[RMDB]
The record gives the reactivity of an RNA of 177 nucleotides to 2A3 and DMS. As a SHAPE reagent, 2A3 marks flexible, mostly unpaired nucleotides at the ribose 2'-OH. Conditions: 150 mM KOAc, 10 mM MgCl2 and 150 mM bicine (pH 8.5), 24 C. For 2A3, 2,746 sequencing reads were counted.

RNA sequence: GGGAACGACUCGAGUAGAGUCGAAAACAUGUCGGCGACGCGCUACUACCAAGUGCUCAAUGCGCUGGUGGAUCGGCCCGAGGCGCUGGCCGCCGACCCGAUGCUGGUAAAGCGGUUGCGGCGGCUGGGGAUAUCCAUGGUUCGCCAUGGAUAUCCCAAAAGAAACAACAACAACAAC
Reactivity to 2A3 in 0.01 (KOAc 150mM, MgCl2 10mM, bicine 150mM(pH8.5), 24C), signal-to-noise 5, nucleotides 027 to 126: c090a070u200g060u120c030g000g030c000g000a030c040g050c010g000c040u030a050c010u000a010c040c030a240a090g010u020g010c030u060c160a130a200u220g000c000g000c000u000g000g010u020g000g040a170u170c100g040g000c020c060c020g030a050g100g020c030g010c030u040g030g000c000c000g000c000c000g030a050c000c000c010g100a120u190g050c100u070g000g180u290a090a090a030g040c010g000g020u080u170g080c010g010g000c020g000g020c020u040g010
Reactivity to DMS in 0.01 (KOAc 150mM, MgCl2 10mM, bicine 150mM(pH8.5), 24C), signal-to-noise 2, nucleotides 027 to 126: c210a130u010g000u000c000g010g020c070g000a100c070g010c220g000c020u000a130c020u000a070c030c030a040a080g030u000g000c010u000c300a180a120u040g000c000g000c000u000g000g000u020g030g000a050u030c120g000g000c000c030c040g020a090g010g020c040g060c020u000g000g000c000c000g010c000c000g000a070c130c000c030g010a100u070g030c020u030g000g030u000a100a200a030g030c020g030g000u000u040g000c010g000g000c010g000g010c000u060g010